An RNA of 170 nucleotides, treated with 2A3 and DMS and read out base by base.
Conditions: 150 mM KOAc, 10 mM MgCl2 and 150 mM bicine (pH 8.5), 24 C.
For DMS the reverse transcriptase was MarathonRT.
2A3 adducts were read by reverse transcription with SuperScript II with manganese.
The data come from the RNA Mapping Database (RMDB), library 15KLIB.
RNA sequence: GGGAACGACUCGAGUAGAGUCGAAAAAAGAACAAUCUAUAUAGAUUGGUUUGGCAUGUUGAGCGUAAAGACGUUCCAUAUCCUAAGCAAUCUAUUUUUACUAUUAAUAGUGUGGUCCAAAAGGAUGAGAGGGUAUAGUUCGCUAUACCCAAAAGAAACAACAACAACAAC
Reactivity to 2A3 in 0.01 (KOAc 150mM, MgCl2 10mM, bicine 150mM(pH8.5), 24C), signal-to-noise 9, nucleotides 027 to 129: a000a000g140a040a020c060a030a040u050c050u050a090u010a000u020a150g010a010u010u010g060g140u110u020u030g020g000c080a000u010g010u020u040g010a000g000c010g010u030a100a150a050g270a070c000g000u010u010c000c000a010u000a020u040c000c010u010a010a000g020c000a010a010u000c000u010a040u020u040u020u040u050a060c040u020a030u240u110a110a130u050a110g040u050g040u060g080g030u040c010c010a040a110a110a110g040g020a020u070g020a030g030a040
Reactivity to DMS in 0.01 (KOAc 150mM, MgCl2 10mM, bicine 150mM(pH8.5), 24C), signal-to-noise 6, nucleotides 027 to 129: a000a000g000a080a030c090a120a050u010c020u040a050u000a060u020a000g000a000u010u000g020g000u020u000u000g050g000c300a000u000g030u000u030g030a040g030c020g070u020a110a130a110g020a080c000g000u000u000c000c000a000u000a050u020c030c000u000a040a060g000c000a000a000u030c030u020a000u020u030u030u050u040a060c050u040a060u030u030a080a110u030a000g030u000g020u000g000g000u000c030c040a080a050a080a070g040g000a050u010g040a120g030a080